This 207-nucleotide RNA was probed chemically with 2A3 and DMS. For 2A3, 1,882 sequencing reads were counted.
RNA sequence: GGGAACGACUCGAGUAGAGUCGAAAACUGAGGUUUGCCUGACCCUGUGUGUGCUUGAGACCAUGCACGUGGCCACCAGGGUGUGCAUGAUGUUGAUCUGCCUGGGUUUGGGGGAUCCGGUGGGUCUUCCCAUGCAGAGUAGAGGCCACACCCUUCGAACGAUUAAGACGUUCGCGUCUUAAUCGUUAAAAGAAACAACAACAACAAC
Reactivity to 2A3 in 0.01 (KOAc 150mM, MgCl2 10mM, bicine 150mM(pH8.5), 24C), signal-to-noise 2, nucleotides 027 to 156: c040u060g030a050g080g030u070u130u140g050c010c020u030g040a030c010c010c030u050g070u040g000u000g020u030g060c030u110u130g110a070g030a140c030c030a070u080g000c070a040c100g020u050g020g000c000c000a020c000c040a010g000g040g000u000g020u010g000c010a030u040g010a100u210g050u020u020g020a020u000c000u020g020c030c020u120g080g000g000u070u100u130g030g000g000g000g000a000u010c000c010g030g020u100g060g010g000u020c030u060u070c000c020c000a000u000g000c000a030g000a050g140u150a030g030a040g030g020c000c010a020c010a000c000c030c000u070u080c050g030
Reactivity to DMS in 0.01 (KOAc 150mM, MgCl2 10mM, bicine 150mM(pH8.5), 24C), signal-to-noise 1, nucleotides 027 to 156: c050u020g010a110g010g020u000u010u020g020c020c000u000g000a090c020c000c000u020g020u000g000u000g010u000g060c040u100u030g030a220g010a110c180c010a060u000g010c110a050c110g030u000g030g010c010c010a090c060c000a100g000g040g020u020g060u000g000c020a050u000g000a080u010g000u000u000g040a070u010c020u000g030c010c030u010g020g010g010u000u000u000g000g000g020g010g020a030u000c000c000g050g050u000g030g000g000u000c000u000u010c010c040c010a050u010g000c000a050g000a200g010u010a070g000a100g050g000c030c010a040c010a100c040c020c010u000u000c070g000